RNA sequence: GGGAACGACUCGAGUAGAGUCGAAAACUUGACGCACCAGUUGCGGAAGCACUGCCGGCUCACCUCACCGAAGCGGGAUUGCUCGGUCAGGUGCUCGGCGCCCUUCUUGAGGCCCAGCUCCACGUAGACGUUGCGCAGGUACUCAUUGGUGAAUUGCGAUGAUUAUGCACUUCGGUGCAUAAUCAUCAAAAGAAACAACAACAACAAC
Reactivity to 2A3 in 0.01 (KOAc 150mM, MgCl2 10mM, bicine 150mM(pH8.5), 24C), signal-to-noise 2, nucleotides 027 to 156: c020u000u010g120a090c010g020c000a000c010c040a080g070u230u080g030c040g000g030a010a020g010c020a020c160u120g000c000c000g010g000c050u030c030a020c010c000u050c000a010c000c000g050a190a090g000c050g040g240g100a290u230u300g030c030u000c020g000g000u000c010a000g030g030u000g010c010u020c040g000g000c000g050c020c000c000u110u120c050u060u110g010a030g030g000c040c030c030a000g020c000u000c010c010a070c040g070u120a060g040a290c010g020u070u000g000c000g000c010a020g000g030u130a230c000u020c040a050u060u220g020g010u050g140a120a080u120u090g000c050